[RMDB]
RNA sequence: GGGAACGACUCGAGUAGAGUCGAAAAUGAACGCCAAACAACCCGGAACUAUCCGCUGCUUGGAGGAAUUUCGCGAGCUCCUGCCCACAACGGUGCUGCACUCGGCGGAUCGUUUUCGAGCGGCUGCAGCCUCAUUAUGGUUCGCCAUAAUGAGGCUAAAAGAAACAACAACAACAAC
Reactivity to DMS in 0.01 (KOAc 150mM, MgCl2 10mM, bicine 150mM(pH8.5), 24C), signal-to-noise 4, nucleotides 027 to 126: u010g020a110a140c140g000c020c020a070a170a110c120a090a060c090c040c030g010g010a050a050c110u020a050u010c010c010g000c010u000g000c120u020u020g020g010a090g010g020a100a040u000u030u010c080g020c080g010a040g030c020u010c000c040u010g020c010c010c070a130c130a040a090c160g000g030u030g010c030u010g000c030a050c050u020c030g000g000c030g000g020a010u000c070g010u000u000u000u040c040g000a200g000c090g010g000c040u000g020c080
Reactivity to 2A3 in 0.01 (KOAc 150mM, MgCl2 10mM, bicine 150mM(pH8.5), 24C), signal-to-noise 6, nucleotides 027 to 126: u090g000a070a010c050g010c010c030a090a030a100c040a030a090c020c020c010g010g020a020a000c010u030a040u050c000c010g010c030u030g020c040u080u110g060g060a050g040g070a100a120u080u140u140c070g010c040g020a030g020c020u020c000c010u010g040c010c040c000a100c030a140a040c090g060g030u110g010c010u020g000c000a020c040u030c010g020g000c000g030g000a010u020c010g030u000u020u060u100c030g030a030g020c040g010g000c030u040g010c020
Structure probing data (DMS and 2A3) for a 177-nucleotide construct. The RNA was probed in 150 mM KOAc, 10 mM MgCl2 and 150 mM bicine (pH 8.5) at 24 C. It was measured as part of the RMDB library OK1LIB. For 2A3 the reverse transcriptase was SuperScript II with manganese.